[RMDB]
RNA sequence: GGGAACGACUCGAGUAGAGUCGAAAAGAUAUGGAAAGGUCGAACUACCUCGAGUCGGAAACGACAGUGAAAGAGGCGACCCUUUCCUAAGUCAAAAGAGAGGCAUAGGUUCGCCUAUGCCUCUCAAGUUACUAUCAGGGUUCGCCCUGAUAGUAACAAAAGAAACAACAACAACAAC
Reactivity to DMS in 0.01 (KOAc 150mM, MgCl2 10mM, bicine 150mM(pH8.5), 24C), signal-to-noise 3, nucleotides 027 to 126: g010a050u010a300u010g000g000a000a020a010g010g010u000c020g010a060a030c110u010a300c040c000u000c010g010a250g000u000c000g030g000a050a080a120c010g020a010c020a140g000u000g010a070a110a150g000a040g000g000c020g000a030c100c040c050u000u010u000c000c010u000a010a120g000u010c030a060a050a060a150g000a010g010a000g020g000c000a010u000a000g010g000u000u020c250g030c000c010u000a000u000g000c000c000u020c000u000c000a010a040
Reactivity to 2A3 in 0.01 (KOAc 150mM, MgCl2 10mM, bicine 150mM(pH8.5), 24C), signal-to-noise 2, nucleotides 027 to 126: g000a030u060a010u110g000g000a020a030a010g000g000u010c010g040a180a090c150u160a120c160c020u000c010g010a040g010u000c030g000g000a020a020a000c020g000a000c010a050g100u140g300a170a110a130g010a040g040g050c020g010a020c030c000c010u030u010u000c000c000u000a110a020g050u040c040a060a000a200a050g010a000g000a000g050g020c010a010u060a010g000g030u080u250c300g080c000c000u000a000u000g000c000c000u000c000u010c000a010a000
An RNA of 177 nucleotides, treated with DMS and 2A3 and read out base by base. For DMS the reverse transcriptase was MarathonRT. The 2A3 profile rests on 2,393 reads. It was measured as part of the RMDB library TTRDEL.